Structure probing data (DMS and 2A3) for a 177-nucleotide construct. The 2A3 profile rests on 908 reads. Reactivities are given for positions 27 through 126. It was measured as part of the RMDB library OK2TST.
[RMDB]
RNA sequence: GGGAACGACUCGAGUAGAGUCGAAAACGCUGCCACUUAUUGCUGCUGAGGGUCUUGAGCUUGGCCGCCUUGAUGGUGCCGGUUACUAAAUCGACGGUAGCGAAGGCCAGGAGCGCGUAGAUAGCCGUCGUCUGGUAACCUUCGGGUUACCAGACGAAAAAGAAACAACAACAACAAC
Reactivity to DMS in 0.01 (KOAc 150mM, MgCl2 10mM, bicine 150mM(pH8.5), 24C), signal-to-noise 1, nucleotides 027 to 126: c070g040c010u020g010c030c050a160c030u000u010a040u010u010g030c030u000g020c010u000g000a100g020g010g020u000c060u000u010g000a110g020c020u000u010g020g030c070c060g020c080c040u000u010g000a100u030g020g040u000g020c060c000g000g000u000u000a120c100u000a040a050a030u000c030g010a140c070g020g000u000a050g020c000g020a060a040g000g000c030c070a130g020g000a130g010c020g000c010g000u000a050g000a150u000a140g000c020c020g010
Reactivity to 2A3 in 0.01 (KOAc 150mM, MgCl2 10mM, bicine 150mM(pH8.5), 24C), signal-to-noise 1, nucleotides 027 to 126: c020g000c030u080g060c030c010a070c050u090u150a140u190u290g000c000u020g030c020u030g040a070g000g090g050u100c030u040u000g020a020g000c070u190u230g100g010c010c030g080c030c040u030u120g150a110u140g020g030u020g000c020c000g000g040u010u070a120c040u060a090a070a110u050c020g080a060c040g030g000u010a010g050c050g020a050a050g000g000c050c000a050g030g000a000g020c060g000c010g000u000a010g050a140u090a030g050c030c000g050